Description
The record gives the reactivity of an RNA of 207 nucleotides to 2A3. Conditions: 150 mM KOAc, 10 mM MgCl2 and 150 mM bicine (pH 8.5), 24 C.
RNA sequence: GGGAACGACUCGAGUAGAGUCGAAAAGGGGACGACUUGGCUUCGACAGGAGUAGAGUGGCCUUGGUGGCAUGUCGCUUUGAGCAAAGCGUAAAAAGCUCAAAUUAAAAUUAAACGCAAACAACGUUAAAUUCGCUCCUGCUUAUGCUAAAGCUGCGGAAUGAUCACAACUUCGGUUGUGAUCAUUCAAAAGAAACAACAACAACAAC
Reactivity to 2A3 in 0.01 (KOAc 150mM, MgCl2 10mM, bicine 150mM(pH8.5), 24C), signal-to-noise 2, nucleotides 027 to 156: g030g000g020g040a000c030g010a030c070u060u030g010g010c030u050u020c030g150a130c020a030g010g010a000g050u110a100g030a000g080u040g000g010c000c000u020u100g120g000u040g040g000c050a070u100g040u070c000g030c020u000u000u040g000a000g010c020a040a100a100g020c000g110u260a110a070a020a010a000g010c010u030c010a000a020a090u070u030a030a000a020a020u070u130a100a060a000c020g000c050a060a140a050c030a060a000c050g040u050u100a030a170a050u050u050c040g010c020u010c000c000u010g020c010u050u050a110u300g000c000u010a140a000a000g010c070u070g030c090g030
Reactivities are given for positions 27 through 156. For 2A3 the reverse transcriptase was SuperScript II with manganese.